Conditions: 150 mM KOAc, 10 mM MgCl2 and 150 mM bicine (pH 8.5), 24 C.
An RNA of 207 nucleotides, treated with 2A3 and read out base by base.

[RMDB]
RNA sequence: GGGAACGACUCGAGUAGAGUCGAAAAACGGUCAGUACGCUGACUGAGGGAAACGGGAGCCGGGCUUGGGACAAGAGCCAUCCCAAGUCCAAGGCCAAGUAGGCUCUAGUGAUGGUACGCCAUCACAAAAACUGGUCUACCUUCGGGUAGACCAGAAGGACUAUAGGAACUUCGGUUCCUAUAGUCCAAAAGAAACAACAACAACAAC
Reactivity to 2A3 in 0.01 (KOAc 150mM, MgCl2 10mM, bicine 150mM(pH8.5), 24C), signal-to-noise 2, nucleotides 027 to 156: a000c020g000g010u020c010a000g010u050a050c190g030c110u000g000a010c020u000g020a100g000g020g000a050a160a080c080g040g030g090a110g040c050c050g030g000g000c000u000u000g000g000g000a000c030a040a070g000a000g020c000c010a000u010c000c000c000a010a000g010u000c000c010a060a040g010g000c010c000a050a060g020u140a100g050g020c000u000c000u020a060g000u000g000a000u000g000g030u080a020c220g040c040c000a000u030c000a000c020a020a090a010a000a000c000u000g000g000u010c000u000a000c000c000u050u160c250g080g010g020u000a000g000a000c000c000a000g000a000a000